The record gives the reactivity of an RNA of 207 nucleotides to DMS and 2A3.
It was measured as part of the RMDB library OK3TST.
The reactions ran in a buffer of 150 mM KOAc, 10 mM MgCl2 and 150 mM bicine (pH 8.5), at 24 C.

[RMDB]
RNA sequence: GGGAACGACUCGAGUAGAGUCGAAAAAGGUGGGUGGCCAAUCAGAGACCUGGCUGAUGGAGUAUUGUUGGUCACUGUGCCAGAGAGAAUGUGGAGUCCUGGAGGCCUUGAACUGAUUAGUAGGUAUCCCAGCCAGAAGCAUUGUGCUCCUUUGCAACGUAUAAUAUCAUUUCGAUGAUAUUAUACGAAAAGAAACAACAACAACAAC
Reactivity to DMS in 0.01 (KOAc 150mM, MgCl2 10mM, bicine 150mM(pH8.5), 24C), signal-to-noise 5, nucleotides 027 to 156: a060g000g040u000g010g010g060u000g020g040c010c020a050a070u010c120a140g010a220g010a120c050c020u000g030g020c050u000g010a110u000g020g010a150g040u000a120u000u000g020u000u000g010g000u000c020a060c030u010g030u000g010c040c010a120g010a170g000a120g000a050a080u000g020u000g020g010a190g010u000c030c020u000g030g010a160g010g010c030c030u010u000g020a090a300c050u010g010a120u000u000a120g010u000a050g030g020u000a120u010c010c010c010a130g010c030c020a090g000a110a120g010c060a150u000u000g020u000g000c030u000c020c010u010u000u000g020c020a160a110
Reactivity to 2A3 in 0.01 (KOAc 150mM, MgCl2 10mM, bicine 150mM(pH8.5), 24C), signal-to-noise 6, nucleotides 027 to 156: a000g060g010u070g010g020g010u020g010g010c010c010a020a040u130c040a020g060a020g050a180c020c010u040g060g020c040u070g020a130u150g030g020a050g060u140a080u170u120g020u050u030g000g010u020c020a010c050u050g060u070g030c000c010a010g020a000g000a000g030a070a090u110g010u090g070g030a040g040u030c030c020u030g030g030a050g040g030c010c010u040u060g040a080a040c020u040g040a090u080u030a050g130u030a020g100g000u050a070u050c010c000c000a000g010c010c010a030g010a070a000g010c040a030u040u080g040u110g040c010u060c020c020u030u050u080g040c050a070a040
Reactivities are given for positions 27 through 156.